RNA sequence: GGGAACGACUCGAGUAGAGUCGAAAAGUACCAGCAGAGAUCCGGAUGAUUACAUGUGAUGUAAUCGCAUGACUUAUAAGAACGUCGUAUGCGAACAGUGCAGGGUCAUUGAGGUCGAGAAUCAAGGUGAUGCUACCUAUUUCGAUAGGUAGCAUCAAAAAGAAACAACAACAACAAC
Reactivity to DMS in 0.01 (KOAc 150mM, MgCl2 10mM, bicine 150mM(pH8.5), 24C), signal-to-noise 5, nucleotides 027 to 126: g010u020a120c010c010a130g000c150a070g010a160g010a020u010c010c100g010g000a020u020g000a040u010u000a060c040a070u000g020u000g010a070u000g010u000a040a080u010c000g010c020a020u000g000a010c010u000u010a120u060a110a100g020a060a110c260g000u000c020g000u040a030u000g000c000g000a020a130c040a040g000u010g010c010a020g000g000g000u000c010a020u010u000g010a090g010g020u010c030g000a160g000a120a100u020c090a070a140g010g000
Reactivity to 2A3 in 0.01 (KOAc 150mM, MgCl2 10mM, bicine 150mM(pH8.5), 24C), signal-to-noise 1, nucleotides 027 to 126: g020u000a010c030c000a000g000c020a060g050a000g010a070u000c000c000g050g000a000u000g000a000u000u050a060c010a000u000g000u030g020a020u010g010u000a080a000u010c000g000c010a000u000g010a000c030u080u040a070u020a170a090g080a050a040c060g000u000c000g010u050a050u050g000c010g000a050a010c000a000g040u000g050c000a000g000g020g000u000c020a000u000u030g040a000g000g000u010c010g000a000g010a000a060u140c030a020a020g070g000